Record summary: An RNA of 207 nucleotides, treated with DMS and 2A3 and read out base by base. The reactions ran in a buffer of 150 mM KOAc, 10 mM MgCl2 and 150 mM bicine (pH 8.5), at 24 C.
RNA sequence: GGGAACGACUCGAGUAGAGUCGAAAACGGCAUCGCUGGGAAACGAACUUGACUACAACUCAACAGCUCACUGAAGCGCGCACGGUGAGACAUGAGUUGUUUUCAAUCCCGUUUCCUGUGCUGAAGCGCGCACGGCAACCGAAAGGUGCGGACUAAACAAUAGAUUCAUCUUCGGAUGAAUCUAUUGAAAAGAAACAACAACAACAAC
Reactivity to DMS in 0.01 (KOAc 150mM, MgCl2 10mM, bicine 150mM(pH8.5), 24C), signal-to-noise 3, nucleotides 027 to 156: c100g020g020c080a060u010c030g020c030u000g010g000g000a020a020a060c000g010a040a110c030u000u000g010a050c010u000a030c000a010a030c000u000c010a120a110c060a130g000c010u010c010a020c010u000g000a050a050g060c020g060c010g000c010a300c020g000g020u000g010a030g020a050c030a130u000g000a020g000u000u010g000u000u000u000u010c020a040a060u000c040c040c030g020u030u000u000c000c020u000g020u000g010c000u000g010a050a040g020c030g000c000g020c030a300c080g000g000c030a080a110c020c020g020a090a120a170g040g010u010g040c020g020g020a120c090u000a090a100a230
Reactivity to 2A3 in 0.01 (KOAc 150mM, MgCl2 10mM, bicine 150mM(pH8.5), 24C), signal-to-noise 4, nucleotides 027 to 156: c050g130g030c090a100u080c040g010c030u050g010g000g010a000a010a000c010g080a030a030c020u010u010g000a000c000u010a000c000a000a000c000u010c020a200a160c090a300g010c000u000c000a010c010u040g040a210a040g010c000g000c000g000c000a010c010g040g000u000g000a010g020a010c040a130u220g000a000g000u000u000g000u000u000u000u000c000a000a020u120c010c000c000g000u000u000u000c000c000u010g000u010g000c000u020g010a100a040g000c000g010c000g000c020a020c020g010g000c010a010a020c020c000g060a120a020a030g020g000u020g000c000g020g030a030c120u140a110a070a000

Values cover nucleotides 27 to 156.